The record gives the reactivity of an RNA of 177 nucleotides to 2A3 and DMS. High 2A3 reactivity points to a flexible backbone, as in loops and unpaired stretches. The DMS profile rests on 1,377 reads. For 2A3, 1,408 sequencing reads were counted.
[RMDB]
RNA sequence: GGGAACGACUCGAGUAGAGUCGAAAACAAUCAAUGUUACAAUAUAUUUGAGCAAGUUAGAUAGAUGGUGGCUAAUCUCAUGAAAAUGGGGUGAUGCCUAUGGUUUUGGUUUCUACUCCAAGAAAGGCUACCUAAGUCAGUUCGCUGACUUAGGUAGAAAAGAAACAACAACAACAAC
Reactivity to 2A3 in 0.01 (KOAc 150mM, MgCl2 10mM, bicine 150mM(pH8.5), 24C), signal-to-noise 2, nucleotides 027 to 126: c010a000a050u110c040a060a120u070g030u070u160a190c020a110a010u120a010u030a040u290u010u070g000a000g000c060a050a050g080u220u110a030g030a110u040a020g090a080u110g170g110u060g010g000c000u000a010a010u000c000u000c040a010u040g080a130a060a020a010u010g010g010g010g000u020g010a030u230g010c000c020u010a040u050g030g000u020u020u050u100g050g010u010u140u000c000u040a060c010u000c050c000a080a000g090a190a060a010g130g000
Reactivity to DMS in 0.01 (KOAc 150mM, MgCl2 10mM, bicine 150mM(pH8.5), 24C), signal-to-noise 2, nucleotides 027 to 126: c060a140a050u000c040a090a080u000g010u000u000a190c060a100a070u000a100u020a170u000u000u000g000a080g000c030a040a040g020u020u000a080g000a070u010a050g010a090u000g020g030u000g020g000c010u000a210a020u000c010u010c000a000u010g010a080a060a120a030u000g000g010g000g000u000g010a100u000g000c000c010u000a050u010g010g010u000u000u010u000g000g010u020u010u000c000u000a060c040u010c020c080a030a100g000a060a070a100g010g020